RNA sequence: GGGAACGACUCGAGUAGAGUCGAAAAGAUAUGGAAUGAAGUAGCUUUUGACGCGAAUUCGGAAACGAAUCGCGAUAAGCUACCAUUCCUAAGUCAAAAGUUAAUUGUCCUUCGGGACAAUUAACAACGUAUAGUGCUCGUUCGCGAGCACUAUACGAAAAGAAACAACAACAACAAC
Reactivity to DMS in 0.01 (KOAc 150mM, MgCl2 10mM, bicine 150mM(pH8.5), 24C), signal-to-noise 2, nucleotides 027 to 126: g000a000u000a120u000g000g000a000a000u000g000a170a230g010u000a010g000c000u000u000u000u020g010a290c010g000c000g010a050a110u010u000c000g010g010a010a020a040c000g000a010a000u000c010g030c010g000a030u020a020a020g020c000u000a000c000c000a000u000u000c000c000u000a010a070g000u010c010a070a150a130a150g010u000u000a010a010u000u000g000u000c000c000u000u000c250g000g020g020a010c000a000a000u000u010a000a010c020a050a090
Reactivity to 2A3 in 0.01 (KOAc 150mM, MgCl2 10mM, bicine 150mM(pH8.5), 24C), signal-to-noise 2, nucleotides 027 to 126: g000a010u020a010u130g000g050a040a000u050g060a300a170g030u030a010g000c020u110u260u300u300g050a060c030g020c020g020a080a210u000u000c000g020g030a040a000a010c000g000a010a010u000c030g020c020g090a120u100a230a100g000c000u000a000c000c000a010u010u000c000c000u010a010a010g000u010c020a210a000a060a000g000u000u010a010a010u000u000g000u040c030c000u030u070c300g030g000g000a000c000a000a000u000u000a000a000c010a010a010